[RMDB]
Structure probing data (2A3) for a 207-nucleotide construct. Values cover nucleotides 27 to 156. The 2A3 profile rests on 711 reads.

RNA sequence: GGGAACGACUCGAGUAGAGUCGAAAACGCUGCACCACGGCGUGCUGAUGAUGGCGUACCAGCGGAACGACGAAACGCUGCUGGACGGGGCCUUCUUCUACCCGGCGCCCGUGCACGCGCUCUUUGCCUGCCCGGACCACCUGCACGCGAUGCGCGGCUGCGUCGCCCAAUUCGUUGGGCGACGCAGAAAAGAAACAACAACAACAAC
Reactivity to 2A3 in 0.01 (KOAc 150mM, MgCl2 10mM, bicine 150mM(pH8.5), 24C), signal-to-noise 1, nucleotides 027 to 156: c040g010c030u120g000c060a020c050c020a090c070g090g030c000g000u020g030c040u020g000a150u020g000a020u060g000g060c090g010u040a150c000c000a000g010c040g050g000a130a080c020g290a040c050g020a100a080a050c020g000c020u140g000c030u020g010g010a040c020g010g000g060g000c010c010u120u210c070u100u000c040u130a160c020c040c000g020g020c010g190c000c000c020g010u070g060c010a030c050g020c010g010c020u130c010u080u090u090g010c000c000u050g020c070c040c050g070g010a120c000c000a050c030c000u020g000c040a010c000g070c020g030a050u010g060c070g000c000g050g000